An RNA of 177 nucleotides, treated with DMS and read out base by base.
The DMS profile rests on 778 reads.
The RNA was probed in 150 mM KOAc, 10 mM MgCl2 and 150 mM bicine (pH 8.5) at 24 C.
RNA sequence: GGGAACGACUCGAGUAGAGUCGAAAAUUAUUGUUAAUCGUCAUUCCCGCCUGCGCGAAACGACGAAAGAGUAGGGAGUUGGGCUUAAGUUUUUGAUAGGGUUCGCACCUAAUCCCCCAUAAGCGGAUACGCUAGCAUCGUUCGCGAUGCUAGCGUAAAAAGAAACAACAACAACAAC
Reactivity to DMS in 0.01 (KOAc 150mM, MgCl2 10mM, bicine 150mM(pH8.5), 24C), signal-to-noise 1, nucleotides 027 to 126: u020u010a030u010u010g010u010u000a050a160u000c030g000u000c080a210u000u000c080c010c020g050c070c060u000g030c140g010c020g020a040a030a060c140g030a060c000g010a010a050a130g010a090g010u000a090g010g000g020a060g060u010u000g070g000g050c080u010u000a090a070g010u000u000u020u000u000g010a120u010a190g010g050g020u000u000c140g000c130a150c090c010u010a050a130u010c010c010c040c100c050a090u020a060a050g040c060g010g010a180